[RMDB]
Structure probing data (DMS and 2A3) for a 177-nucleotide construct. For DMS the reverse transcriptase was MarathonRT. High DMS reactivity at an A or C suggests that its Watson-Crick edge is free.

RNA sequence: GGGAACGACUCGAGUAGAGUCGAAAAGUCGAUCGAAUUAACUACGACCGAUCUAAAGACGCUUGAGUCGAGCGAUAGAUCUGUGUGAGACAUUCUCGCACGUAGUGGGCUCGAUCGAGAAUGUCUCGCAGUGCUCUGUAUUCGUACAGAGCACUGCAAAAGAAACAACAACAACAAC
Reactivity to DMS in 0.01 (KOAc 150mM, MgCl2 10mM, bicine 150mM(pH8.5), 24C), signal-to-noise 3, nucleotides 027 to 126: g010u010c010g000a010u000c000g010a070a080u000u010a130a090c130u010a060c000g000a080c130c060g010a010u010c020u010a070a110a180g000a080c030g000c020u010u000g000a050g010u000c030g000a070g010c050g010a150u010a020g000a050u010c030u010g000u010g010u000g010a010g000a060c160a090u000u000c000u000c000g000c130a100c010g000u000a030g000u010g000g010g000c080u000c000g010a080u000c000g010a020g010a010a030u000g000u000c010u000c020
Reactivity to 2A3 in 0.01 (KOAc 150mM, MgCl2 10mM, bicine 150mM(pH8.5), 24C), signal-to-noise 3, nucleotides 027 to 126: g020u000c000g010a000u010c010g010a010a070u100u030a100a060c040u070a030c040g040a010c020c000g000a010u010c010u060a050a060a030g040a030c010g030c030u010u060g050a030g070u130c030g020a040g000c040g040a060u060a170g160a110u040c050u070g080u020g040u030g080a000g000a000c020a040u070u010c000u000c010g020c020a010c020g020u020a030g020u020g040g080g000c030u010c020g030a110u020c000g000a010g010a010a010u010g000u000c000u000c010